[RMDB]
RNA sequence: GGGAACGACUCGAGUAGAGUCGAAAAAAAAAGACCCAAGACACCCUUGGCAGUUGACCUCCUCGUUGGUGGGUGUCGGUAAUGUUGUCAGUCACAGGCAACAGUUAACGAUCUGCCUUACAAAAAAGAAUCAGGAUUAGUUCGCUAAUCCUGAUUCAAAAGAAACAACAACAACAAC
Reactivity to 2A3 in 0.01 (KOAc 150mM, MgCl2 10mM, bicine 150mM(pH8.5), 24C), signal-to-noise 2, nucleotides 027 to 126: a000a000a020a020a030g140a020c000c010c010a000a030g010a000c000a010c000c030c000u030u080g020g020c000a020g000u020u020g020a000c000c000u000c000c020u150c130g160u130u100g010g020u040g000g000g000u010g010u020c040g030g000u080a100a040u030g010u000u010g010u000c020a010g120u150c060a070c050a190g000g010c000a000a000c000a000g020u050u100a020a020c050g000a030u000c010u010g020c020c010u030u100a090c090a030a070a040a020a010a020
Reactivity to DMS in 0.01 (KOAc 150mM, MgCl2 10mM, bicine 150mM(pH8.5), 24C), signal-to-noise 2, nucleotides 027 to 126: a030a090a040a050a060g060a190c040c000c000a080a040g000a030c010a010c020c000c000u000u010g010g030c020a020g000u000u010g010a070c000c000u000c100c100u040c120g020u010u000g010g000u000g000g010g020u000g000u000c010g000g000u000a040a080u010g010u000u000g000u000c010a050g020u000c300a100c300a120g020g000c000a000a010c000a010g000u000u010a050a010c010g000a000u000c010u000g010c010c000u010u020a040c210a000a020a060a050a050a100